[RMDB]
Chemical mapping of a 177-nucleotide RNA with 2A3.
RNA sequence: GGGAACGACUCGAGUAGAGUCGAAAAUCCUGCGGGAUGUCGGCGAAGCGGAUCGGCGUCCGGCGCAUCUCGCCGAACUCGGAGAUCAGCUUGCCGUCCUCGCUGUAGACCUUGAGGGGGAUCUGCAAGGUGGAUUGCACUUCGGUGCAAUCCACCUAAAAGAAACAACAACAACAAC
Reactivity to 2A3 in 0.01 (KOAc 150mM, MgCl2 10mM, bicine 150mM(pH8.5), 24C), signal-to-noise 1, nucleotides 027 to 126: u010c000c000u020g000c000g000g000g000a090u220g050u060c000g000g010c250g070a060a000g010c000g040g000a000u000c000g020g040c100g040u000c010c050g000g000c010g030c000a180u130c070u050c010g000c000c000g000a050a040c000u010c050g040g270a130g000a020u000c000a010g000c000u000u040g020c000c000g000u000c000c000u000c010g000c010u020g000u000a020g020a010c000c000u050u000g090a290g000g040g000g030g090a100u000c000u020g000c130a080